This 177-nucleotide RNA was probed chemically with DMS and 2A3. The reactions ran in a buffer of 150 mM KOAc, 10 mM MgCl2 and 150 mM bicine (pH 8.5), at 24 C. For DMS, 2,508 sequencing reads were counted. For DMS the reverse transcriptase was MarathonRT. It was measured as part of the RMDB library TTRDES.
[RMDB]
RNA sequence: GGGAACGACUCGAGUAGAGUCGAAAAGAUAUGGAUGGAGUCACAAGGGAGCAGCCAUUCGGAAACGAAUGUGCUGCGAAGAACUUGUGAGCUCCAUCCUAAGUCAAAAGUAGAGUUCGCUCUACAAGCAUGUAUACAACUUCGGUUGUAUACAUGCAAAAGAAACAACAACAACAAC
Reactivity to DMS in 0.01 (KOAc 150mM, MgCl2 10mM, bicine 150mM(pH8.5), 24C), signal-to-noise 2, nucleotides 027 to 126: g000a070u010a300u000g000g000a000u000g010g020a040g000u010c000a000c010a000a000g020g000g020a060g010c000a010g010c000c000a010u010u010c000g020g010a060a120a190c010g000a010a010u000g000u020g000c020u000g010c010g000a070a130g010a110a170c000u000u010g020u000g000a090g000c010u000c000c020a020u000c000c000u000a010a120g010u020c050a060a080a080a180g000u020a030g000a040g050u020u010c300g000c000u000c000u010a010c020a090a200
Reactivity to 2A3 in 0.01 (KOAc 150mM, MgCl2 10mM, bicine 150mM(pH8.5), 24C), signal-to-noise 2, nucleotides 027 to 126: g020a040u090a060u150g010g000a000u000g000g030a010g030u040c000a000c010a020a030g020g000g010a040g000c000a010g000c000c000a000u000u010c000g030g020a050a060a020c000g010a010a000u050g080u280g000c000u010g000c020g010a030a000g000a000a000c000u000u010g000u000g000a010g010c000u010c000c010a000u000c000c000u000a000a000g010u020c020a000a030a070a090g020u040a000g010a030g050u110u210c300g090c090u010c020u010a010c000a010a000